The record gives the reactivity of an RNA of 207 nucleotides to 2A3 and DMS. For 2A3, 2,394 sequencing reads were counted. Values are in units of 0.01, from 0 to 300, in steps of 10.
RNA sequence: GGGAACGACUCGAGUAGAGUCGAAAAGUUCAAUUGAGGGAUCAAUAAGAGCGGUGACUUUCAAACGGGGACCAAGUUUGUGUUCAAAACGGAAAGAAUGGCUAAAGGUGCAUUAGUAAGGAGUCGCAGUCUUAACUAAAAUCAGCUCACUUCCAAGGGUAUUAUUAGACUUCGGUCUAAUAAUACCAAAAGAAACAACAACAACAAC
Reactivity to 2A3 in 0.01 (KOAc 150mM, MgCl2 10mM, bicine 150mM(pH8.5), 24C), signal-to-noise 3, nucleotides 027 to 156: g030u040u040c030a030a030u060u030g020a050g030g050g020a040u060c030a040a070u160a160a050g020a010g040c020g000g030u040g020a040c040u060u100u060c060a080a070a070c050g010g010g010g030a010c010c020a010a020g020u050u040u060g060u040g010u040u070c010a030a050a010a010c000g030g010a030a000a030g010a020a010u070g010g000c020u030a000a000a040g000g020u020g000c000a010u020u010a020g040u060a070a080g020g010a000g000u040c020g000c040a030g020u020c030u100u080a070a050c060u060a050a020a070a130u070c020a010g030c020u050c060a050c020u110u120c050c010a010a050g300
Reactivity to DMS in 0.01 (KOAc 150mM, MgCl2 10mM, bicine 150mM(pH8.5), 24C), signal-to-noise 2, nucleotides 027 to 156: g010u010u000c060a080a110u010u020g010a130g050g010g020a160u000c030a090a110u010a090a150g010a080g000c050g060g010u000g020a090c050u010u000u000c040a040a100a110c080g030g000g020g020a130c070c040a060a160g010u010u020u000g010u010g010u010u000c120a060a040a060a070c050g020g010a080a080a080g010a050a060u000g000g030c020u010a020a040a050g000g000u000g010c030a030u010u000a050g030u000a100a070g000g020a040g050u000c030g030c090a070g000u000c040u010u000a050a140c050u010a040a040a090a060u000c080a070g030c060u000c050a070c100u010u000c010c020a060a190g000